This 177-nucleotide RNA was probed chemically with DMS.
DMS (dimethyl sulfate) methylates the pairing face of unpaired adenines and cytosines.
Values cover nucleotides 27 to 126.
DMS adducts were read by reverse transcription with MarathonRT.
The reactions ran in a buffer of 150 mM KOAc, 10 mM MgCl2 and 150 mM bicine (pH 8.5), at 24 C.

RNA sequence: GGGAACGACUCGAGUAGAGUCGAAAAUCAUAGCUUCACGAGCGCGACCUGGUCCUCCACGAGCUGGCCCGCGGCCGCGAGCUCAGCUUUUACCUUCCCGCCCACCUCCUCGCGCAGGUACACCGAAAAGUCAGAAGAACUUCGGUUCUUCUGACUUAAAAGAAACAACAACAACAAC
Reactivity to DMS in 0.01 (KOAc 150mM, MgCl2 10mM, bicine 150mM(pH8.5), 24C), signal-to-noise 1, nucleotides 027 to 126: u010c120a090u020a060g000c020u000u000c050a090c130g000a120g030c030g000c060g000a140c060c040u010g000g040u010c020c030u000c020c060a080c120g000a030g010c010u000g000g030c010c000c030g040c020g020g020c180c180g000c030g010a030g030c030u030c030a040g000c020u010u000u000u000a110c140c050u000u000c010c020c010g000c040c020c030a140c040c030u000c020c010u000c030g030c030g030c060a070g010g030u000a090c090a120c070c030g010a100a130